[RMDB]
RNA sequence: GGGAACGACUCGAGUAGAGUCGAAAAGAAGCCAGGAAACGGCUCCAGCUGCUGCCUAUGGAUAGCAGCCACAGUGGCUCCUUUACUUUUGUAAUUUGCUUUAUUGUUACCAACCAUUAGGCGCCAGAAUACCCAUAAGGUUCGCCUUAUGGGUAUUAAAAGAAACAACAACAACAAC
Reactivity to 2A3 in 0.01 (KOAc 150mM, MgCl2 10mM, bicine 150mM(pH8.5), 24C), signal-to-noise 3, nucleotides 027 to 126: g050a040a000g010c000c010a040g280g000a140a150a050c070g030g010c000u010c020c010a020g000c010u000g000c010u010g000c000c020u160a200u240g060g020a080u030a040g000c010a010g000c030c000a030c020a030g140u040g010g010c010u020c000c000u100u120u130a140c050u100u250u080u120g030u020a040a120u040u090u190g090c040u240u170u200a160u230u220g030u050u000a020c000c030a060a000c010c000a000u000u060a010g020g000c000g000c000c000a010g060
Reactivity to DMS in 0.01 (KOAc 150mM, MgCl2 10mM, bicine 150mM(pH8.5), 24C), signal-to-noise 5, nucleotides 027 to 126: g020a080a040g020c010c040a090g020g010a090a120a140c150g000g020c010u000c060c040a170g000c000u000g020c010u000g000c010c030u000a110u010g010g010a090u000a030g010c010a010g010c010c120a050c160a120g010u000g010g000c010u000c030c020u000u010u000a070c070u000u010u000u010g010u010a040a040u010u010u010g010c150u010u000u000a070u020u000g010u000u000a110c020c080a110a080c120c040a080u000u000a050g020g020c060g000c060c050a120g010